[RMDB]
The record gives the reactivity of an RNA of 207 nucleotides to 2A3. 2A3 is a SHAPE reagent: it acylates the 2'-hydroxyl of flexible nucleotides of all four kinds. 2A3 adducts were read by reverse transcription with SuperScript II with manganese. It was measured as part of the RMDB library ARCHII. The RNA was probed in 150 mM KOAc, 10 mM MgCl2 and 150 mM bicine (pH 8.5) at 24 C.
RNA sequence: GGGAACGACUCGAGUAGAGUCGAAAACAGGUCCGUCCUCUCGCUAAGCAAAAACCUGAGCAUCCCGCCAACGGGGAUAAUCGUUGGCUCCCGCACAGUGGGUCAACCGUGCUAAGCCUGUGAACGAGCGGAAAGUUACUAGUCAAUGCGGACAGCGGCUGGUAUUGAAGUUCGCUUCAAUACCAGCAAAAGAAACAACAACAACAAC
Reactivity to 2A3 in 0.01 (KOAc 150mM, MgCl2 10mM, bicine 150mM(pH8.5), 24C), signal-to-noise 1, nucleotides 027 to 156: c040a100g000g020u060c040c000g030u060c090c080u020c010u050c020g010c110u150a090a040g020c030a080a000a070a070a070c040c060u000g050a050g080c000a110u030c040c010c000g030c000c000a060a010c030g030g000g030g000a020u080a040a010u100c030g000u000u000g000g010c010u010c000c010c010g000c030a040c010a060g040u090g010g000g030u010c000a030a030c070c040g020u000g000c000u040a080a020g030c000c040u050g030u010g030a030a070c050g000a050g010c020g010g110a060a000a040g090u100u140a150c090u040a050g040u050c050a020a180u090g000c020g050g000a040c020a020g040c040g060